Structure probing data (DMS and 2A3) for a 177-nucleotide construct. The RNA was probed in 150 mM KOAc, 10 mM MgCl2 and 150 mM bicine (pH 8.5) at 24 C. The data come from the RNA Mapping Database (RMDB), library M2PK50. Reactivities are given for positions 27 through 126. 2A3 adducts were read by reverse transcription with SuperScript II with manganese. For DMS the reverse transcriptase was MarathonRT.

RNA sequence: GGGAACGACUCGAGUAGAGUCGAAAAGUUCAUGUGUUCGCACAUGAACAAAAGACGGAGAGAUAAGCACCAUGGACUCAACCGUCGAAAACCAAAGGUGCAAAAGUGGGGGGUUCGCCCCCCACAACAAGCAUACGUGGUUCGCCACGUAUGCUUGAAAAGAAACAACAACAACAAC
Reactivity to DMS in 0.01 (KOAc 150mM, MgCl2 10mM, bicine 150mM(pH8.5), 24C), signal-to-noise 1, nucleotides 027 to 126: g010u000u000c000a000u010g010u000g020u000u020c170g040c000a000c010a020u000g010a030a000c000a070a040a070a140g010a030c020g000g040a300g000a040g040a160u010a060a130g060c000a010c010c010a060u010g000g000a140c000u000c010a060a130c000c000g010u010c000g000a090a040a060a210c040c020a020a050a100g040g010u000g020c000a110a020a090a060g030u000g020g000g020g020g020g010u000u010c200g000c010c000c000c000c000c000a000c000a030a050
Reactivity to 2A3 in 0.01 (KOAc 150mM, MgCl2 10mM, bicine 150mM(pH8.5), 24C), signal-to-noise 1, nucleotides 027 to 126: g000u010u000c010a020u020g010u000g050u050u060c150g070c060a000c000a000u000g000a000a000c010a000a050a000a000g000a000c010g020g010a020g000a000g030a190u040a300a000g020c010a010c010c000a100u130g090g060a090c000u010c010a120a070c080c010g010u010c010g000a030a100a000a010c020c000a090a030a030g000g000u000g000c020a030a040a040a030g000u010g020g000g000g000g000g000u000u010c040g030c020c000c000c000c000c000a000c000a000a000